RNA sequence: GGGAACGACUCGAGUAGAGUCGAAAAGAUAUGGAAGUGAACUACAUACAUGACGUCGUUGAAAACAGUCGGGAGUCGGAAACGACUCCCGACUGUUGGAGACGGAGUGUAUGCACUUCCUAAGUCAGGUAUGUACUAGGUUCGCCUAGUACAUACCAAAAGAAACAACAACAACAAC
Reactivity to DMS in 0.01 (KOAc 150mM, MgCl2 10mM, bicine 150mM(pH8.5), 24C), signal-to-noise 1, nucleotides 027 to 126: g020a000u020a300u000g000g010a030a000g020u000g000a060a040c050u070a300c030a000u000a000c010a040u010g010a300c040g020u000c010g020u000u010g010a200a150a030a020c000a040g000u000c000g030g040g010a100g000u000c040g010g000a080a040a300c000g020a030c000u000c030c000c000g000a030c000u000g000u000u000g000g000a100g000a010c010g000g000a200g000u010g000u040a000u000g000c020a000c000u000u000c000c000u000a000a050g000u000c030a190
The data come from the RNA Mapping Database (RMDB), library TTRINS. This 177-nucleotide RNA was probed chemically with DMS. DMS adducts were read by reverse transcription with MarathonRT.